The record gives the reactivity of an RNA of 177 nucleotides to DMS. The data come from the RNA Mapping Database (RMDB), library TTRINS. Values cover nucleotides 27 to 126.
RNA sequence: GGGAACGACUCGAGUAGAGUCGAAAAGAUAUGGACCCAUCUACUGGACGAAGAACUACACUUAUACCUAGAUCGGAAACGAUCUAGGUAUAAGUGUAGGGAGUCCUAGUAGAGUGGGUCCUAAGUCGGGAAUAUAAAACUUCGGUUUUAUAUUCCCAAAAGAAACAACAACAACAAC
Reactivity to DMS in 0.01 (KOAc 150mM, MgCl2 10mM, bicine 150mM(pH8.5), 24C), signal-to-noise 2, nucleotides 027 to 126: g000a100u000a300u010g010g000a010c000c000c000a070u000c000u000a020c000u000g020g000a030c020g020a130a210g010a160a190c010u000a000c020a030c000u000u000a000u000a000c000c010u000a010g000a020u000c000g000g000a120a070a240c000g010a000u000c000u000a000g000g000u000a000u000a000a000g020u000g010u000a000g000g020g000a070g020u000c010c000u000a000g000u010a000g000a030g020u000g010g010g000u000c000c000u000a020a110g010u000c150